The record gives the reactivity of an RNA of 177 nucleotides to DMS and 2A3. Reactivities are rounded to 0.1 and cut off at 0 and 3. Reactivities are given for positions 27 through 126. DMS adducts were read by reverse transcription with MarathonRT.

[RMDB]
RNA sequence: GGGAACGACUCGAGUAGAGUCGAAAACUAAGGCGUCUGCUUUCGCAAACAAAGUGAGUACUAGUUUGUUUGGUCGGCUGACCUCAAGUUUAGCUAAUUUAUCAAGUAAAAUAGGGAGCAGUCUUAGUGAGUAUGAUUGGUUCGCCAAUCAUACUCAAAAAGAAACAACAACAACAAC
Reactivity to DMS in 0.01 (KOAc 150mM, MgCl2 10mM, bicine 150mM(pH8.5), 24C), signal-to-noise 3, nucleotides 027 to 126: c020u000a030a010g000g020c120g010u010c110u000g010c000u000u000u010c030g010c080a030a020a050c060a030a080a100g040u000g000a190g010u010a140c060u000a180g010u010u010u000g000u000u000u000g010g000u010c180g010g010c060u000g000a040c020c080u010c150a060a180g000u000u000u000a030g020c030u000a080a080u010u000u000a100u010c050a050a110g010u000a040a040a030a080u010a100g000g000g010a020g010c030a050g010u020c020u000u000a000g020
Reactivity to 2A3 in 0.01 (KOAc 150mM, MgCl2 10mM, bicine 150mM(pH8.5), 24C), signal-to-noise 3, nucleotides 027 to 126: c000u020a020a000g050g030c060g090u090c150u060g000c000u010u030u030c040g000c060a040a050a030c010a030a170a010g100u120g110a030g050u080a070c030u030a060g070u060u000u040g020u070u000u020g050g000u030c040g050g120c110u140g000a010c010c000u080c050a040a030g000u020u090u100a020g000c000u020a040a090u060u070u160a160u130c040a080a000g050u090a080a060a150a180u100a060g030g000g010a010g000c000a000g010u000c000u010u000a020g000